[RMDB]
RNA sequence: GGGAACGACUCGAGUAGAGUCGAAAAACAUUUGGAUUACAUCAAUAGUAACAUGAGCGGAAGUAUACAGAACAAGAAGUACUGCGGUUAUUCAAGUUCAAAGUUCACACUAUCGCAAUAAAUUAAACAAUCUGAAUUUGUUCGCAAAUUCAGAUUGAAAAGAAACAACAACAACAAC
Reactivity to 2A3 in 0.01 (KOAc 150mM, MgCl2 10mM, bicine 150mM(pH8.5), 24C), signal-to-noise 2, nucleotides 027 to 126: a000c050a040u090u110u090g080g010a070u110u080a040c010a040u120c070a120a200u120a140g090u050a050a050c040a190u100g090a020g000c010g000g050a010a010g000u010a030u020a070c030a040g050a020a010c000a040a020g040a020a000g000u060a010c000u020g070c110g050g030u030u020a030u070u080c010a020a010g000u000u030c040a140a050a030g060u140u140c030a030c000a010c060u030a020u130c010g040c020a020a030u130a090a090a050u210u130a060a070a000
Reactivity to DMS in 0.01 (KOAc 150mM, MgCl2 10mM, bicine 150mM(pH8.5), 24C), signal-to-noise 2, nucleotides 027 to 126: a070c030a090u000u000u000g010g000a130u000u010a090c050a070u010c060a090a080u010a170g000u030a060a020c080a140u010g010a110g020c020g000g000a030a030g030u020a050u000a010c060a090g030a020a050c010a070a290g010a020a070g000u000a020c040u000g010c140g020g020u020u000a130u000u000c050a020a300g000u010u010c010a040a050a100g000u010u000c140a070c150a090c020u000a020u000c040g010c060a040a050u010a040a060a050u020u030a020a060a150